[RMDB]
RNA sequence: GGGAACGACUCGAGUAGAGUCGAAAAAAGUUUUUAAUCUCUGUGAUGUGAGGAUGGAAGGAGUUGAGACAUGUGAAGCUCUUUGAGUAAUGCCUGGCACUUAGGAUGUGCACGGUGAAUAUUCAUGAUGAUCAUGACUGUCAUUAGAAUCUCAGUACCAGGUAAAUGGAUUCGUCCAUUUACCUGGAAAAGAAACAACAACAACAAC
Reactivity to DMS in 0.01 (KOAc 150mM, MgCl2 10mM, bicine 150mM(pH8.5), 24C), signal-to-noise 1, nucleotides 027 to 156: a050a090g030u000u000u000u000u000a110a080u000c020u000c040u000g070u000g030a140u010g000u010g010a100g000g010a060u010g000g030a060a020g010g000a050g000u000u000g000a110g010a090c050a080u000g000u010g020a080a140g020c060u000c050u000u020u010g010a100g020u000a080a100u000g020c010c010u010g030g010c030a070c040u000u000a220g000g040a130u000g050u000g000c030a070c130g000g000u000g010a150a100u000a060u010u000c020a030u010g010a050u000g030a060u000c040a070u000g000a120c100u010g030u010c010a130u000u000a100g000a060a050u000c000u000c050a090g020u000a250
Reactivity to 2A3 in 0.01 (KOAc 150mM, MgCl2 10mM, bicine 150mM(pH8.5), 24C), signal-to-noise 3, nucleotides 027 to 156: a000a020g140u140u070u020u020u050a080a110u040c020u010c020u080g070u020g060a100u060g060u040g020a070g060g000a030u080g070g050a020a020g030g050a030g030u050u080g050a030g010a030c020a030u130g030u030g050a040a030g000c040u010c000u090u050u100g030a020g010u040a040a040u080g000c000c020u050g000g010c010a010c020u080u090a080g080g100a140u150g020u010g010c020a000c010g010g040u020g030a100a060u090a090u050u040c040a010u060g050a020u060g030a040u050c010a040u050g040a080c030u100g030u040c000a010u030u020a020g030a070a060u040c020u010c050a020g130u170a060
The record gives the reactivity of an RNA of 207 nucleotides to DMS and 2A3. The data come from the RNA Mapping Database (RMDB), library OK3TST. Conditions: 150 mM KOAc, 10 mM MgCl2 and 150 mM bicine (pH 8.5), 24 C.